RNA sequence: GGGAACGACUCGAGUAGAGUCGAAAAGAGAUGGCGAGAGCCUUCGGUAGUAUAGCGAAAAUCAUAAAUGAGAAGAGCUCUAAACGCCUAAGUAGAGUUAAAAUAAUUAGACAGGCACUACUACAAACACGGCCUCGAACGUUCGCGUUCGAGGCAACAAUACGAUGCACUUCGGUGCAUCGUAUUGAAAAGAAACAACAACAACAAC
Reactivity to 2A3 in 0.01 (KOAc 150mM, MgCl2 10mM, bicine 150mM(pH8.5), 24C), signal-to-noise 3, nucleotides 027 to 156: g100a000g010a020u080g010g000c020g010a040g000a020g010c010c000u000u010c030g030g000u060a120g010u060a060u110a090g070c060g060a050a060a050a040u130c080a070u120a190a090a120u190g020a040g020a100a000g000a040g010c000u000c010u020a050a170a040c040g000c000c000u000a070a000g010u000a010g010a000g000u120u150a070a070a110a080u170a020a160u160u030a070g030a040c030a010g090g000c030a000c030u080a000c010u050a020c090a030a090a010c050a000c150g140g020c000c000u010c000g010a000a000c000g020u050u070c190g000c020g120u000u000c000g000a000g000g000c000a000a000
Reactivity to DMS in 0.01 (KOAc 150mM, MgCl2 10mM, bicine 150mM(pH8.5), 24C), signal-to-noise 2, nucleotides 027 to 156: g000a120g080a100u000g020g020c030g000a300g010a170g020c050c000u000u010c060g040g000u010a100g020u000a050u000a070g010c040g010a060a070a100a120u020c030a100u000a010a080a110u000g020a200g000a160a130g020a210g000c000u000c000u010a070a150a180c040g060c000c020u010a030a120g000u000a010g000a070g000u010u010a060a040a080a190u000a040a080u020u010a070g010a130c040a120g000g020c040a110c070u010a040c030u000a090c090a080a080a110c060a120c110g030g020c030c000u000c000g000a020a000c020g040u000u000c240g070c070g030u020u010c020g000a000g040g000c000a000a010

An RNA of 207 nucleotides, treated with 2A3 and DMS and read out base by base. The data come from the RNA Mapping Database (RMDB), library M2RFPK. High DMS reactivity at an A or C suggests that its Watson-Crick edge is free. The RNA was probed in 150 mM KOAc, 10 mM MgCl2 and 150 mM bicine (pH 8.5) at 24 C. For DMS the reverse transcriptase was MarathonRT.